[RMDB]
RNA sequence: GGGAACGACUCGAGUAGAGUCGAAAAAUAUGUAGAUAGUUGUGAUACAUGCUGAGAAGAAAAAUAACACAGAGAAGGUGCAUAGGAAGUGUCAGGCUGGUGGUGUGGGGAUACAGUUUUGGGUAGGGUAUGCAGGGAUGUCCUUGCUAAGAUGGUGGCGUAGCCUAGAAUUCGUUCUAGGCUACGCAAAAGAAACAACAACAACAAC
Reactivity to 2A3 in 0.01 (KOAc 150mM, MgCl2 10mM, bicine 150mM(pH8.5), 24C), signal-to-noise 1, nucleotides 027 to 156: a000u190a050u060g020u070a090g000a110u020a090g010u040u000g010u030g020a020u010a090c000a040u020g040c070u110g000a030g000a140a040g140a020a060a010a000a000u140a050a050c080a000c000a010g060a000g020a100a050g030g000u040g010c050a060u110a160g040g030a050a070g010u030g090u190c070a020g120g000c080u070g000g060u000g010g030u040g000u160g050g060g000g000a000u090a070c030a000g010u050u040u080u070g050g000g040u020a070g010g000g050u020a020u130g050c000a000g050g000g000a040u120g090u110c000c010u000u030g000c000u040a040a020g060a090u010g010g100u070g030